[RMDB]
RNA sequence: GGGAACGACUCGAGUAGAGUCGAAAAUGUUGGUGGGACCAACACCUGUCAAUAUAAUUGGGAGAAAUAUUUUAACACAGAUAGGGUGCACACUGGUAUUCCCUAUCAGUUCAAUUGAAACUGUCCCUCGCUCUUACCGCUUCGGCGGUAAGAGCGAAAAAGAAACAACAACAACAAC
Reactivity to 2A3 in 0.01 (KOAc 150mM, MgCl2 10mM, bicine 150mM(pH8.5), 24C), signal-to-noise 1, nucleotides 027 to 126: u170g000u000u000g000g050u020g040g150g140a300c000c000a000a000c130a000c080c000u020g000u060c110a150a050u130a000u090a090a000u090u000g020g000g000a030g280a000a160a000u140a010u090u170u000u090a090a030c000a000c000a000g000a000u000a000g020g000g000u020g110c070a050c000a000c110u050g090g020u080a080u000u050c000c000c000u000a000u000c000a000g000u000u000c050a050a000u000u130g190a270a280a000c000u000g050u040c000c000c020